Structure probing data (2A3 and DMS) for a 207-nucleotide construct.
For 2A3, 369 sequencing reads were counted.
It was measured as part of the RMDB library OK3TST.
DMS adducts were read by reverse transcription with MarathonRT.
For 2A3 the reverse transcriptase was SuperScript II with manganese.
The RNA was probed in 150 mM KOAc, 10 mM MgCl2 and 150 mM bicine (pH 8.5) at 24 C.
RNA sequence: GGGAACGACUCGAGUAGAGUCGAAAAAUACUCAAAAACAUUACAGGCUUUGCCGGCACAAGUGUUGGCUCUAUAGUUGCCGCAUUGUUGGCGUGUGGCGCCAGUUAUAACUUUAUUAAGUCAGAAUUAAUGGGGUUAAAUUUAGCUAAAUUAACCGCAACACGUGAUACUUCGGUAUCACGUGUUGAAAAGAAACAACAACAACAAC
Reactivity to 2A3 in 0.01 (KOAc 150mM, MgCl2 10mM, bicine 150mM(pH8.5), 24C), signal-to-noise 1, nucleotides 027 to 156: a000u230a080c010u050c130a000a070a070a120a020c030a050u120u070a050c040a040g110g000c040u050u160u090g010c010c000g000g000c050a010c000a020a120g050u000g030u170u140g050g010c040u160c040u050a140u040a180g230u150u160g000c000c000g000c000a030u000u050g050u040u100g010g000c000g000u030g000u010g050g000c020g050c010c010a000g000u010u000a050u000a180a000c010u020u050u070a080u090u140a030a000g010u010c090a050g080a100a100u120u050a080a070u200g000g000g000g000u020u040a100a030a080u070u020u090a000g000c050u070a180a000a000u080u000a040a000c040c010g110
Reactivity to DMS in 0.01 (KOAc 150mM, MgCl2 10mM, bicine 150mM(pH8.5), 24C), signal-to-noise 1, nucleotides 027 to 156: a130u010a110c070u020c020a050a070a210a160a160c070a090u020u020a130c030a040g000g040c050u010u000u010g020c020c030g070g050c000a060c040a080a120g050u000g000u000u010g010g040c020u020c040u010a090u000a050g050u010u000g020c010c050g050c030a160u010u000g050u010u000g000g020c120g050u000g010u010g050g050c120g000c050c090a020g010u000u000a230u020a020a020c010u000u010u000a010u010u000a010a030g050u000c040a300g020a120a300u000u000a020a010u000g020g010g020g000u010u000a020a060a020u010u000u000a030g030c030u020a060a050a100u010u010a070a060c040c070g040